[RMDB]
RNA sequence: GGGAACGACUCGAGUAGAGUCGAAAAUAUAUAAAUUAGAUAUCGAAUUAAAUUAUCCUGAUAGUCACAUUCAAAGGGUAGACCAAGUAGAAGUGACUUUCCCGACUAGACCGGGGUGGGGAGGCUGGACAGAUCUAAACUUCGGUUUAGAUCUGUCAAAAGAAACAACAACAACAAC
Reactivity to 2A3 in 0.01 (KOAc 150mM, MgCl2 10mM, bicine 150mM(pH8.5), 24C), signal-to-noise 2, nucleotides 027 to 126: u120a010u040a000u020a020a000a270u110u110a020g100a090u110a020u260c010g000a020a100u210u100a180a180a050u210u130a040u110c000c020u060g000a010u070a150g030u000c000a000c000a110u020u010c040a040a050a000g100g070g020u080a090g110a130c020c000a120a030g050u050a110g200a030a000g030u000g030a000c000u000u020u000c000c000c000g090a020c050u060a010g170a050c030c000g020g000g040g030u080g000g000g040g000a080g040g000c070u010g060
Reactivity to DMS in 0.01 (KOAc 150mM, MgCl2 10mM, bicine 150mM(pH8.5), 24C), signal-to-noise 2, nucleotides 027 to 126: u060a120u010a090u030a030a050a100u000u010a050g000a080u020a080u000c030g000a140a110u030u010a080a110a100u000u000a040u000c010c060u000g000a110u000a020g040u000c000a010c000a130u020u010c030a030a170a180g030g000g020u030a090g010a180c030c000a010a120g030u000a130g020a070a000g000u000g000a030c000u000u000u010c000c020c000g020a100c140u030a090g000a100c200c020g030g000g010g020u020g000g000g000g000a000g000g000c060u050g000

Source information:
Chemical mapping of a 177-nucleotide RNA with 2A3 and DMS. DMS adducts were read by reverse transcription with MarathonRT. For 2A3, 935 sequencing reads were counted. For DMS, 2,511 sequencing reads were counted. The RNA was probed in 150 mM KOAc, 10 mM MgCl2 and 150 mM bicine (pH 8.5) at 24 C. It was measured as part of the RMDB library OK1LIB.